This 177-nucleotide RNA was probed chemically with 2A3 and DMS.
DMS (dimethyl sulfate) methylates the pairing face of unpaired adenines and cytosines.
Values cover nucleotides 27 to 126.
RNA sequence: GGGAACGACUCGAGUAGAGUCGAAAAAAUCUGCACGACCCCUGUUGUCGGUGAUGUUUAUAGGCUAAAUAGUCGAAUCGCUGCUCAAUCACAAGUCGGCAGUGGCAGUGCCCGCAGUAGGCGGUCACUGCGCAUUUAGCUUCGGCUAAAUGCGCAGAAAAGAAACAACAACAACAAC
Reactivity to 2A3 in 0.01 (KOAc 150mM, MgCl2 10mM, bicine 150mM(pH8.5), 24C), signal-to-noise 2, nucleotides 027 to 126: a000a000u080c050u120g000c080a070c270g020a010c000c000c010c000u040g020u080u050g050u040c020g010g030u000g010a000u030g150u100u300u100a190u160a060g010g000c010u050a300a180a210u220a270g010u010c030g060a030a030u010c010g030c010u010g010c030u020c090a090a090u090c040a050c030a200a070g080u040c020g020g000c010a010g000u040g020g040c000a000g000u010g090c060c000c000g060c020a030g110u190a030g020g150c140g000g060u000c010a000
Reactivity to DMS in 0.01 (KOAc 150mM, MgCl2 10mM, bicine 150mM(pH8.5), 24C), signal-to-noise 6, nucleotides 027 to 126: a080a050u010c020u000g010c040a140c030g020a060c020c030c090c120u010g020u000u000g010u010c160g010g000u000g010a030u000g010u000u010u000a110u000a180g010g010c010u010a100a090a140u010a050g010u000c010g000a090a030u000c020g010c010u000g010c160u010c050a050a040u010c130a090c240a070a090g010u000c070g000g010c010a010g020u000g010g010c070a030g000u000g000c060c000c020g020c020a160g010u010a070g020g020c040g010g020u000c020a040